Conditions: 150 mM KOAc, 10 mM MgCl2 and 150 mM bicine (pH 8.5), 24 C. The record gives the reactivity of an RNA of 177 nucleotides to DMS and 2A3. It was measured as part of the RMDB library TTRDEL. Reactivities are given for positions 27 through 126. The 2A3 profile rests on 61,733 reads.
[RMDB]
RNA sequence: GGGAACGACUCGAGUAGAGUCGAAAAGAUAUGGAAGUUUACGCGACGAUCAUAUGUGGAACCUCGGAAACGAGAAACGCAUAUGGGAGCGUAUACUUCCUAAGUCAAACCGUCGUUCGCGACGGAAGUUAGGUAGUAAGUUCGCUUACUACCUAACAAAAGAAACAACAACAACAAC
Reactivity to DMS in 0.01 (KOAc 150mM, MgCl2 10mM, bicine 150mM(pH8.5), 24C), signal-to-noise 9, nucleotides 027 to 126: g010a020u010a300u010g000g000a000a000g000u000u000u000a000c000g010c010g000a090c290g000a050u010c000a000u000a000u000g010u000g010g000a190a200c090c000u000c000g000g000a100a090a200c000g000a010g000a020a030a110c010g000c000a010u000a000u000g000g000g000a040g010c010g010u000a000u000a010c000u000u000c000c000u000a010a070g000u000c030a100a110a170c000c000g000u000c000g020u000u010c220g010c010g010a010c000g000g000a020a040
Reactivity to 2A3 in 0.01 (KOAc 150mM, MgCl2 10mM, bicine 150mM(pH8.5), 24C), signal-to-noise 9, nucleotides 027 to 126: g020a020u070a030u130g010g010a000a010g010u010u050u030a010c010g100c020g100a300c020g010a090u020c000a000u010a000u010g010u010g000g030a040a040c010c000u000c000g000g030a080a060a040c010g000a000g000a020a040a000c010g000c000a000u000a000u000g000g000g010a010g000c000g000u000a000u010a000c000u010u000c000c000u000a080a010g040u000c010a040a050a140c010c000g000u010c000g010u060u120c300g000c010g120a000c000g000g010a020a020

Overview:
The DMS profile rests on 17,175 reads.